[RMDB]
RNA sequence: GGGAACGACUCGAGUAGAGUCGAAAAGGGCUGUCGUGCGCUAUGCCGAUCGGGUGUCCGCACUAAGUUCGGCAUCAAUAUGGUGACCUCCCGGGAGCGGGGGACCACCAGGUUGCCUAAGGAGGGGUGAACCGGCCCAGGUCGGAAACGGAGCAGGGAUAGAUGGAUUCUUCGGAAUCCAUCUAUCAAAAGAAACAACAACAACAAC
Reactivity to DMS in 0.01 (KOAc 150mM, MgCl2 10mM, bicine 150mM(pH8.5), 24C), signal-to-noise 1, nucleotides 027 to 156: g040g020g060c020u000g000u010c090g030u000g020c000g000c040u000a050u000g070c030c000g000a070u000c080g010g030g020u010g000u000c120c090g030c040a090c050u010a090a270g030u000u000c050g020g020c010a000u000c030a100a100u000a080u020g010g030u000g030a010c020c010u000c000c000c000g000g010g020a150g030c120g080g000g000g000g010a010c030c000a080c000c000a010g020g020u000u010g000c070c060u000a060a130g010g030a300g000g020g000g040u000g000a050a080c020c080g030g000c060c020c040a060g060g000u000c010g020g000a090a060a080c030g000g010a140g060c030a210g020g000
Reactivity to 2A3 in 0.01 (KOAc 150mM, MgCl2 10mM, bicine 150mM(pH8.5), 24C), signal-to-noise 3, nucleotides 027 to 156: g040g000g000c020u030g020u120c030g030u040g040c030g000c040u040a020u070g050c000c010g020a020u020c050g030g060g000u050g030u020c060c130g100c020a020c030u090a120a090g030u000u050c020g010g000c000a010u000c020a050a120u100a050u160g010g020u030g030a100c000c000u060c050c000c010g010g070g040a130g100c080g000g000g010g010g040a070c110c000a010c010c000a000g010g040u010u050g010c000c010u080a110a070g100g050a040g000g030g000g000u050g030a050a050c030c010g000g000c000c000c000a020g020g070u030c010g050g000a040a080a050c050g030g020a050g070c040a040g010g130